[RMDB]
Conditions: 150 mM KOAc, 10 mM MgCl2 and 150 mM bicine (pH 8.5), 24 C. This 177-nucleotide RNA was probed chemically with 2A3 and DMS. 2A3 adducts were read by reverse transcription with SuperScript II with manganese.
RNA sequence: GGGAACGACUCGAGUAGAGUCGAAAAACGCGACUUACGAGUCGCGAAAGUUUGCCAUGAUGAAAUGCAUGGUGAGUCCGUGUUUCAGCCGAUCACCCUGGUCAAACACAUGCUCUGAGCAGACUAAAAUUAACUUGUUCUUCGGAACAAGUUAAUUAAAAGAAACAACAACAACAAC
Reactivity to 2A3 in 0.01 (KOAc 150mM, MgCl2 10mM, bicine 150mM(pH8.5), 24C), signal-to-noise 8, nucleotides 027 to 126: a000c020g000c000g010a010c000u030u030a060c290g110a010g010u010c000g000c000g000a000a000a010g030u020u040u070g000c000c010a020u040g010a040u050g080a100a080a100u300g020c010a000u010g000g010u020g020a020g050u030c050c040g010u020g100u030u040u050c060a030g010c020c030g020a040u050c010a050c010c010c020u040g020g020u070c020a030a050a000c020a010c010a080u090g010c010u030c050u100g070a060g010c040a020g030a060c040u100a100a090
Reactivity to DMS in 0.01 (KOAc 150mM, MgCl2 10mM, bicine 150mM(pH8.5), 24C), signal-to-noise 7, nucleotides 027 to 126: a110c020g000c000g010a010c000u000u000a110c160g020a050g030u000c000g030c000g010a030a030a070g010u010u010u010g000c000c000a020u000g000a050u000g010a070a080a050u020g010c010a000u010g000g010u000g000a030g010u010c100c070g020u010g000u000u000u000c130a100g010c050c040g010a080u000c110a070c060c040c020u000g000g000u010c160a050a050a070c060a050c060a110u010g000c030u000c060u010g010a120g010c040a070g000a080c050u010a030a060
Notes
Values cover nucleotides 27 to 126. The data come from the RNA Mapping Database (RMDB), libraries RFM100 and RFMREP. Values are in units of 0.01, from 0 to 300, in steps of 10.